[RMDB]
RNA sequence: GGGAACGACUCGAGUAGAGUCGAAAAAUAAGGGUUCACGAGCCGAAAGGCGGGCCUAGCGAACCACCCUGGCCUUUUGGUGAGGCCGGGUGACGACAGAAAAGCUACCCCAGGGAUAACAGAGUUGUCAUGCUCAUAAAUUCGUUUAUGAGCAUGAAAAAGAAACAACAACAACAAC
Reactivity to DMS in 0.01 (KOAc 150mM, MgCl2 10mM, bicine 150mM(pH8.5), 24C), signal-to-noise 7, nucleotides 027 to 126: a070u030a080a100g010g000g010u000u000c040a110c130g030a160g020c000c010g000a070a080a130g010g010c020g000g010g010c020c020u000a070g010c050g000a100a090c090c020a030c010c000c000u040g040g010c000c000u000u000u020u030g010g030u030g000a020g000g010c000c000g000g010g010u000g000a050c100g010a140c140a090g010a080a050a100a130g010c030u000a080c060c010c010c020a110g000g000g020a080u020a080a090c110a100g010a130g000u010u000g000
Reactivity to 2A3 in 0.01 (KOAc 150mM, MgCl2 10mM, bicine 150mM(pH8.5), 24C), signal-to-noise 4, nucleotides 027 to 126: a000u190a030a040g050g000g010u080u110c040a050c110g070a050g050c030c030g040a050a020a010g010g020c000g000g000g000c000c000u010a010g000c000g030a010a000c000c000a000c000c000c020u050g000g010c010c000u070u070u070u130g300g020u300g040a010g000g000c010c000g000g000g000u000g000a020c050g020a000c010a060g170a040a110a010a010g020c020u030a050c000c010c010c010a020g030g040g000a060u050a170a050c040a060g060a050g060u040u080g040
Conditions: 150 mM KOAc, 10 mM MgCl2 and 150 mM bicine (pH 8.5), 24 C. This 177-nucleotide RNA was probed chemically with DMS and 2A3. It was measured as part of the RMDB libraries RFM100 and RFMREP. DMS adducts were read by reverse transcription with MarathonRT. Reactivities are given for positions 27 through 126.